[RMDB]
RNA sequence: GGGAACGACUCGAGUAGAGUCGAAAAUGGGCUACCAGUAAGCGAAAAAUGAUACAGGACGAAAAAAACAUAAUUCGAGAUUUUUCAGGAUGGAUUUUUUUAGGUAUCUAGCAAAACUAUUCUGAUGCAACGUAGAGCACGUUCGCGUGCUCUACAACAGCAUGGUAUAGUUCGCUAUACCAUGCUGAAAAGAAACAACAACAACAAC
Reactivity to 2A3 in 0.01 (KOAc 150mM, MgCl2 10mM, bicine 150mM(pH8.5), 24C), signal-to-noise 3, nucleotides 027 to 156: u030g000g030g010c020u050a040c030c020a030g050u090a030a040g020c010g040a030a050a000a000a090u140g030a040u080a090c080a070g060g040a050c040g030a090a030a020a000a000a020a010c080a060u140a060a090u070u080c050g020a020g020a200u010u030u030u150u180c010a000g000g020a010u000g010g020a040u020u000u030u060u030u050u050a050g030g020u150a050u200c050u010a010g010c030a000a030a000a030c000u010a010u040u010c000u030g040a040u050g020c050a070a040c070g000u000a000g000a000g000c000a000c000g010u030u030c090g020c010g070u010g000c000u000c000u000a000c000a000a000
Reactivity to DMS in 0.01 (KOAc 150mM, MgCl2 10mM, bicine 150mM(pH8.5), 24C), signal-to-noise 2, nucleotides 027 to 156: u020g010g050g000c020u010a050c050c010a110g000u010a070a100g040c050g000a060a060a090a140a090u020g030a180u010a070c030a110g030g030a100c100g000a000a010a010a070a100a050a080c070a080u000a070a070u000u010c030g000a230g020a180u000u010u000u000u000c020a030g020g010a090u000g010g030a040u010u000u010u000u000u010u000a050g020g030u010a040u000c020u000a050g010c150a120a050a060a110c020u000a070u000u010c030u000g030a060u000g000c080a060a090c180g030u000a030g020a020g050c000a000c030g020u000u010c300g020c040g030u000g000c000u000c000u010a000c010a030a020